RNA sequence: GGGAACGACUCGAGUAGAGUCGAAAAUAGUGUCCAAAGGAAGAACCUAACAACUGAGAUCACCUUUGAAAGCUGGUGGGAUGAGCAAGUCGCUCGGGGUUUCACAAUACCACAUUAUAGAACAGAGUCCGUCAUCACUAUUCGUAGUGAUGACGGAAAAAGAAACAACAACAACAAC
Reactivity to 2A3 in 0.01 (KOAc 150mM, MgCl2 10mM, bicine 150mM(pH8.5), 24C), signal-to-noise 2, nucleotides 027 to 126: u080a000g120u070g000u050c070c060a030a000a020g080g020a150a100g020a090a070c000c010u150a030a110c070a000a120c050u070g140a000g030a160u050c000a010c000c010u050u020u070g090a070a140a000g090c120u110g000g000u100g040g080g000a010u100g000a030g000c050a040a200g110u150c050g020c020u000c000g000g000g000g000u000u010u120c100a210c040a040a000u050a110c060c000a010c000a100u090u180a130u110a110g100a100a030c200a060g000a030g060
Reactivity to DMS in 0.01 (KOAc 150mM, MgCl2 10mM, bicine 150mM(pH8.5), 24C), signal-to-noise 2, nucleotides 027 to 126: u060a000g010u010g000u030c060c090a060a040a140g000g000a060a120g000a030a010c080c140u000a040a040c270a130a080c180u000g010a100g000a010u010c060a140c030c020u000u000u000g000a040a070a080g050c050u010g000g000u000g000g010g000a150u010g000a100g010c070a080a160g000u080c070g030c000u000c000g030g030g020g060u000u000u010c040a050c010a040a110u050a140c060c000a100c010a120u020u010a090u040a090g000a050a290c090a000g010a040g060
Conditions: 150 mM KOAc, 10 mM MgCl2 and 150 mM bicine (pH 8.5), 24 C. An RNA of 177 nucleotides, treated with 2A3 and DMS and read out base by base. For 2A3 the reverse transcriptase was SuperScript II with manganese. In probing experiments dimethyl sulfate is read out at A N1 and C N3, which are open when not base-paired.